[RMDB]
RNA sequence: GGGAACGACUCGAGUAGAGUCGAAAAGUACUAUCGGUAGGGUGCAUUCCUGCCACAGGUGAGUAUUGGGACAUAGCUAAAGCAUGUGCAGGAGCUGAUCUACCUGCCGGAUCAUGUCCACCACUAGGUUACUAGCGCUCUUCGGAGCGCUAGUAACAAAAGAAACAACAACAACAAC
Reactivity to DMS in 0.01 (KOAc 150mM, MgCl2 10mM, bicine 150mM(pH8.5), 24C), signal-to-noise 2, nucleotides 027 to 126: g010u020a000c050u010a050u000c050g050g050u000a010g010g010g040u010g060c150a110u020u010c000c010u000g000c050c090a080c200a080g020g000u010g050a080g030u000a100u010u010g030g040g010a030c040a050u000a130g040c110u020a060a090a180g010c030a110u000g000u000g000c020a000g010g000a120g000c100u000g010a080u000c130u020a110c000c000u000g000c030c040g030g000a070u000c110a060u010g030u000c020c020a100c090c000a100c100u010a020g010
Reactivity to 2A3 in 0.01 (KOAc 150mM, MgCl2 10mM, bicine 150mM(pH8.5), 24C), signal-to-noise 1, nucleotides 027 to 126: g030u030a020c030u000a030u090c070g010g000u010a030g010g000g020u040g150c000a070u170u000c000c010u000g000c030c020a060c030a060g090g000u060g120a030g010u070a090u070u200g060g000g030a030c010a020u080a020g100c080u190a150a060a020g070c010a070u100g010u120g040c020a000g020g000a000g010c050u120g100a100u050c020u130a180c000c000u000g000c010c000g030g000a020u080c010a010u060g000u000c000c020a000c010c020a000c050u060a020g000
This 177-nucleotide RNA was probed chemically with DMS and 2A3. 2A3 adducts were read by reverse transcription with SuperScript II with manganese. It was measured as part of the RMDB library OK2TST. The DMS profile rests on 918 reads. The reactions ran in a buffer of 150 mM KOAc, 10 mM MgCl2 and 150 mM bicine (pH 8.5), at 24 C.